[RMDB]
RNA sequence: GGGAACGACUCGAGUAGAGUCGAAAACCCAGACCGUUCGCGGUCUGGGAAAACCGGAAUAAACAUCGGCCCAUGAGCCGAACCGGAAGGGCGUCCGCCCAAAAACUUGUGUCUUCGGACACAAGAAUCUUAAAUAUUUCUUCGGAAAUAUUUAAGAAAAAGAAACAACAACAACAAC
Reactivity to DMS in 0.01 (KOAc 150mM, MgCl2 10mM, bicine 150mM(pH8.5), 24C), signal-to-noise 1, nucleotides 027 to 126: c000c000c000a050g020a020c000c000g020u000u000c190g040c000g010g020u000c020u010g000g000g010a010a010a040a040c010c000g000g010a290a060u010a060a090a270c300a090u000c000g000g040c000c030c210a120u020g000a140g010c000c010g000a010a060c000c000g000g000a200a080g040g000g000c000g000u000c050c050g020c000c000c000a050a040a080a100a100c000u000u000g030u000g000u000c000u000u000c190g020g000a010c000a000c000a000a000g000a060a060
Reactivity to 2A3 in 0.01 (KOAc 150mM, MgCl2 10mM, bicine 150mM(pH8.5), 24C), signal-to-noise 1, nucleotides 027 to 126: c000c000c000a000g010a010c000c000g020u040u040c210g010c020g090g040u000c000u000g000g000g030a020a070a000a010c010c000g000g080a150a150u240a120a120a010c060a140u020c000g010g020c020c050c100a200u260g020a030g000c000c000g000a000a040c020c000g030g000a040a040g040g000g000c030g020u030c100c090g020c000c000c020a080a020a000a000a060c000u000u000g000u000g010u000c000u020u050c300g050g000a020c000a000c010a010a000g000a000a010

This 177-nucleotide RNA was probed chemically with DMS and 2A3. For 2A3 the reverse transcriptase was SuperScript II with manganese. DMS (dimethyl sulfate) methylates the pairing face of unpaired adenines and cytosines. For 2A3, 1,349 sequencing reads were counted. It was measured as part of the RMDB library M2PK50.